[RMDB]
RNA sequence: GGGAACGACUCGAGUAGAGUCGAAAACGGGCUAGCACACACCUUAUGGGUGUGUAGUGUUUGUGCUAAGGGAAAUCAUAACCUUAGGUAUGUUGUAUAAACAUAACGGCAAACUAGUUAUAGCUAAGGAACUAUGUACGUUCGCGUACAUAGUUCCAAAAGAAACAACAACAACAAC
Reactivity to DMS in 0.01 (KOAc 150mM, MgCl2 10mM, bicine 150mM(pH8.5), 24C), signal-to-noise 2, nucleotides 027 to 126: c060g000g010g000c000u000a010g000c150a090c000a000c000a010c010c000u040u000a130u020g010g010g040u010g000u000g010u000a030g000u010g000u000u000u000g010u000g070c020u000a000a000g000g020g010a050a110a200u030c300a070u010a040a190c000c000u010u000a010g000g030u000a000u020g010u000u000g000u110a160u020a080a020a010c010a010u010a010a130c190g000g000c010a020a010a020c010u000a120g020u010u000a110u000a040g000c010u010a140a170
Reactivity to 2A3 in 0.01 (KOAc 150mM, MgCl2 10mM, bicine 150mM(pH8.5), 24C), signal-to-noise 1, nucleotides 027 to 126: c060g020g020g000c030u010a020g000c000a000c000a000c000a010c010c000u160u300a250u300g020g000g050u010g000u010g030u000a010g010u010g020u060u000u040g010u050g070c010u000a000a000g050g000g050a000a030a160u150c040a070u060a060a060c000c010u030u000a020g040g040u010a030u010g000u000u000g050u080a180u240a230a000a010c010a010u030a080a080c040g000g000c000a060a000a000c040u030a030g030u190u120a120u060a110g000c020u060a150a180
Chemical mapping of a 177-nucleotide RNA with DMS and 2A3. The 2A3 profile rests on 978 reads. Reactivities are given for positions 27 through 126. The DMS profile rests on 1,031 reads. The reactions ran in a buffer of 150 mM KOAc, 10 mM MgCl2 and 150 mM bicine (pH 8.5), at 24 C. 2A3 adducts were read by reverse transcription with SuperScript II with manganese. It was measured as part of the RMDB library RFMREP.